RNA sequence: GGGAACGACUCGAGUAGAGUCGAAAAUGAAGGAUCUUGAGAGGAAAUCAUCCAGGAUUUAGGAUAGGCCACAAAUCCAAGGACUGGUUGUUCUUCUAAGAGGAGAGGACAUGGAGAGAAGGCCACAUGAAGACACAGGCAGAGACUAGAGAUGUGCAUAAAGCUUUGCUUUCGAGCAAAGCUUUAUAAAAGAAACAACAACAACAAC
Reactivity to 2A3 in 0.01 (KOAc 150mM, MgCl2 10mM, bicine 150mM(pH8.5), 24C), signal-to-noise 2, nucleotides 027 to 156: u200g030a030a020g030g030a030u000c000u050u120g060a060g000a010g010g050a020a110a030u160c010a020u040c020c040a040g020g010a110u050u040u100a070g040g050a070u070a090g080g040c070c040a090c040a020a140a000u000c010c020a010a100g000g010a040c030u010g030g000u020u040g020u040u020c000u030u020c010u050a050a080g030a010g060g010a000g020a030g010g000a010c050a080u080g020g000a070g010a020g000a090a070g020g050c050c010a030c010a000u160g050a030a030g030a010c040a010c030a050g040g000c030a000g010a010g020a090c010u020a030g030a000g010a110u090g000u000g080c000
Reactivity to DMS in 0.01 (KOAc 150mM, MgCl2 10mM, bicine 150mM(pH8.5), 24C), signal-to-noise 1, nucleotides 027 to 156: u010g000a070a150g030g000a000u000c010u000u020g000a110g010a160g010g000a100a050a030u000c040a030u000c030c050a140g000g010a050u000u000u000a060g000g030a090u000a080g000g020c050c060a060c100a110a080a080u000c000c040a070a160g030g030a080c030u030g010g020u010u000g030u010u020c030u010u020c030u020a050a120g030a160g050g040a080g020a080g030g030a140c080a090u030g000g010a060g000a020g000a080a070g000g010c000c030a040c010a030u000g060a110a110g000a130c030a060c050a030g030g000c040a080g000a070g000a060c030u020a100g000a080g020a110u000g010u000g030c160